This 177-nucleotide RNA was probed chemically with DMS and 2A3. It was measured as part of the RMDB library TTRDES. The 2A3 profile rests on 3,272 reads. The reactions ran in a buffer of 150 mM KOAc, 10 mM MgCl2 and 150 mM bicine (pH 8.5), at 24 C. DMS adducts were read by reverse transcription with MarathonRT.
RNA sequence: GGGAACGACUCGAGUAGAGUCGAAAAGAUAUGGAUCCCACGGACAUGCUCGUCAAUCGGAAACGAUUGGCGAGCAACAGCCGUCGGGAUCCUAAGUCAAACCGCUUAGAGUUCGCUCUAAGCGGAAGUCCUAAGUUUACUUCGGUAAACUUAGGACAAAAGAAACAACAACAACAAC
Reactivity to DMS in 0.01 (KOAc 150mM, MgCl2 10mM, bicine 150mM(pH8.5), 24C), signal-to-noise 2, nucleotides 027 to 126: g010a010u000a010u020g010g010a010u010c000c000c000a010c000g010g000a020c060a300u010g010c010u000c000g020u000c010a010a000u000c000g020g000a010a000a050c000g010a020u010u000g010g020c020g030a020g030c000a010a010c200a110g000c010c010g000u010c230g040g000g010a000u000c000c000u000a020a060g000u000c000a110a220a210c010c000g010c000u000u000a000g010a010g030u000u020c250g010c000u000c000u000a000a010g000c000g000g000a000a020
Reactivity to 2A3 in 0.01 (KOAc 150mM, MgCl2 10mM, bicine 150mM(pH8.5), 24C), signal-to-noise 1, nucleotides 027 to 126: g000a000u020a020u090g000g030a000u010c010c000c000a000c010g000g020a010c190a260u300g000c000u000c000g000u010c000a000a010u010c000g030g010a000a030a000c000g000a000u000u010g000g000c000g010a000g010c010a020a000c000a000g000c010c000g020u030c060g010g020g020a000u000c010c000u000a000a000g010u000c000a010a060a140c000c000g000c000u000u000a010g010a000g000u020u220c270g090c090u010c010u010a000a000g000c000g000g000a000a020